The record gives the reactivity of an RNA of 177 nucleotides to DMS and 2A3. Reactivities are given for positions 27 through 126. Source: RMDB library M2PK90, as collected in RNAgym. The RNA was probed in 150 mM KOAc, 10 mM MgCl2 and 150 mM bicine (pH 8.5) at 24 C. DMS adducts were read by reverse transcription with MarathonRT.
RNA sequence: GGGAACGACUCGAGUAGAGUCGAAAAUUAAAUGAUGUAGUACGGCCGCCACUGAAGGACGGGUCCUCUCCGAUAGGAGAGUUGAGUAGAGUGUGAGCAGGACCGGGUGCUAGUCACUGGUGAAAAACUAGAUUACUAUGUUCGCAUAGUAAUCUAGAAAAGAAACAACAACAACAAC
Reactivity to DMS in 0.01 (KOAc 150mM, MgCl2 10mM, bicine 150mM(pH8.5), 24C), signal-to-noise 9, nucleotides 027 to 126: u000u010a060a080a100u000g010a050u000g010u000a040g010u000a070c060g000g010c020c020g010c030c020a050c040u000g010a110a100g010g000a050c040g000g000g010u000c080c000u000c000u000c000c000g010a160u020a110g010g010a010g000a010g010u000u000g010a130g010u000a080g000a100g010u000g010u000g000a100g020c030a080g020g010a100c060c020g000g000g010u000g000c020u000a060g010u000c020a030c070u000g010g000u000g000a050a060a060a070a150
Reactivity to 2A3 in 0.01 (KOAc 150mM, MgCl2 10mM, bicine 150mM(pH8.5), 24C), signal-to-noise 6, nucleotides 027 to 126: u120u070a040a040a070u100g030a020u090g030u170a030g020u020a020c020g030g000c010c010g010c020c010a070c030u050g040a070a020g060g030a050c040g020g020g000u020c000c010u000c000u000c010c010g180a210u170a130g000g000a000g000a000g010u030u030g040a020g020u080a020g020a040g030u100g010u020g020a060g010c030a050g020g030a030c020c000g030g010g000u040g010c010u010a020g020u020c010a010c070u060g090g020u130g070a110a060a000a010a010